[RMDB]
RNA sequence: GGGAACGACUCGAGUAGAGUCGAAAACUGAGCUUAUCCUACCAGACGCACUAGAAGCAGGUGACGUACGGUUAAGCGACAUCACUGAUGUUAUGUGUCACUUCUUCAAUAAUGGCAUGCGUAGUCAGAUGCACUACUCGUUCGCGAGUAGUGCAUCAAAAGAAACAACAACAACAAC
Reactivity to DMS in 0.01 (KOAc 150mM, MgCl2 10mM, bicine 150mM(pH8.5), 24C), signal-to-noise 2, nucleotides 027 to 126: c030u000g020a050g010c090u000u000a010u000c040c010u000a080c050c140a190g010a130c080g000c020a060c050u000a130g000a050a040g020c300a040g030g000u000g000a050c020g000u030a030c080g000g000u000u000a060a130g000c050g000a050c080a050u000c010a150c170u000g010a040u000g010u010u010a080u000g010u030g000u000c010a030c060u000u000c040u000u020c070a130a080u000a040a080u000g020g000c070a090u020g000c040g020u000a100g000u010c160a020
Reactivity to 2A3 in 0.01 (KOAc 150mM, MgCl2 10mM, bicine 150mM(pH8.5), 24C), signal-to-noise 3, nucleotides 027 to 126: c020u020g010a020g080c020u060u080a040u080c010c030u040a060c000c020a060g000a110c030g000c030a070c080u070a070g000a140a000g040c150a050g000g000u000g040a040c000g060u110a020c000g120g000u040u080a070a010g030c010g040a030c010a030u000c050a070c260u200g000a020u040g010u110u140a060u170g100u020g000u040c000a000c030u040u060c000u050u050c050a050a090u150a130a120u090g040g000c090a040u000g060c050g020u010a030g080u050c020a020